[RMDB]
Chemical mapping of a 177-nucleotide RNA with 2A3 and DMS. High 2A3 reactivity points to a flexible backbone, as in loops and unpaired stretches. DMS adducts were read by reverse transcription with MarathonRT. For DMS, 11,811 sequencing reads were counted. It was measured as part of the RMDB library OK2TST. The RNA was probed in 150 mM KOAc, 10 mM MgCl2 and 150 mM bicine (pH 8.5) at 24 C.
RNA sequence: GGGAACGACUCGAGUAGAGUCGAAAAAGAACUCUUCCCAGCCCGCGAAUAAUUAAUAUGAUUAGAAGGGAAGAGGGAAGGUAGGGAACAGCCUUAAUUAUAGGUUGUAUAUAACGCGGGCUAGAUAUAGUUUAGAUUGAUUCGUCAAUUUAAACUAAAAAGAAACAACAACAACAAC
Reactivity to 2A3 in 0.01 (KOAc 150mM, MgCl2 10mM, bicine 150mM(pH8.5), 24C), signal-to-noise 6, nucleotides 027 to 126: a000g020a030a020c010u000c000u000u000c000c000c000a000g030c000c000c000g000c010g020a040a020u050a060a000u100u090a080a220u180a100u300g030a030u020u090a050g060a250a140g020g000g000a010a000g010a010g030g000g010a090a030g060g040u280a050g000g000g030a070a000c000a000g010c010c010u170u160a250a200u240u160a170u120a160g010g000u010u000g000u020a040u000a010u030a130a020c000g000c000g000g000g000c010u010a010g000a010u090a020
Reactivity to DMS in 0.01 (KOAc 150mM, MgCl2 10mM, bicine 150mM(pH8.5), 24C), signal-to-noise 7, nucleotides 027 to 126: a070g010a210a170c020u000c010u000u000c000c000c010a190g010c010c000c000g020c010g010a180a090u000a040a030u010u010a100a120u010a110u010g010a050u000u000a040g010a130a130g010g000g000a020a010g000a040g000g000g000a090a040g000g000u000a100g010g000g010a110a060c020a020g010c000c010u010u000a070a120u010u010a120u000a030g000g010u000u000g010u000a080u000a100u010a050a070c040g020c010g010g000g010c020u010a020g010a080u010a100